RNA sequence: GGGAACGACUCGAGUAGAGUCGAAAACAGGCCGUGGAGCUUGUGGUGCGUGGACGUCACAAAGAAGUGGAUUCCGGCGAGUGGAAGACGGGCGAAAGCAACACCACCAAAGUGACCAGUACCAACAGCUACGCGAAGCUGACCAUCAAUGGUGAGGUCGAUAACAGGUGUUCGCACCUGUUAUCGAAAAAGAAACAACAACAACAAC
Reactivity to DMS in 0.01 (KOAc 150mM, MgCl2 10mM, bicine 150mM(pH8.5), 24C), signal-to-noise 1, nucleotides 027 to 156: c080a100g070g050c000c050g000u020g000g000a100g060c060u000u000g010u000g030g000u000g000c030g050u000g040g020a010c300g080u000c020a050c040a100a080a210g020a260a060g020u000g000g000a190u000u000c010c000g040g000c020g000a170g060u020g000g000a090a260g020a050c030g070g020g070c070g040a090a150a210g020c080a080a060c030a050c020c000a100c000c010a010a200a250g030u000g000a030c020c000a060g020u000a020c000c020a060a100c070a060g010c000u010a020c040g010c050g000a140a130g030c010u030g020a090c000c000a100u000c060a120a210u000g000g020u000g020a100g000g000
Reactivity to 2A3 in 0.01 (KOAc 150mM, MgCl2 10mM, bicine 150mM(pH8.5), 24C), signal-to-noise 3, nucleotides 027 to 156: c010a030g060g000c020c010g050u030g000g020a020g010c040u080u090g040u020g020g010u040g030c300g240u220g070g020a140c090g010u020c010a010c010a000a180a040g060a110a010g030u020g000g030a070u160u050c030c000g000g000c080g030a110g110u190g070g110a080a040g070a040c000g000g000g030c040g070a130a020a030g000c010a040a080c000a040c090c000a000c000c030a120a080a030g000u030g000a020c010c010a010g000u030a010c000c010a040a120c010a020g000c000u000a000c000g000c010g060a030a010g010c000u040g020a020c010c000a090u170c070a060a200u160g010g030u090g050a080g030g090
Structure probing data (DMS and 2A3) for a 207-nucleotide construct. It was measured as part of the RMDB library OK3TST. Conditions: 150 mM KOAc, 10 mM MgCl2 and 150 mM bicine (pH 8.5), 24 C. The 2A3 profile rests on 1,939 reads. Reactivities are given for positions 27 through 156.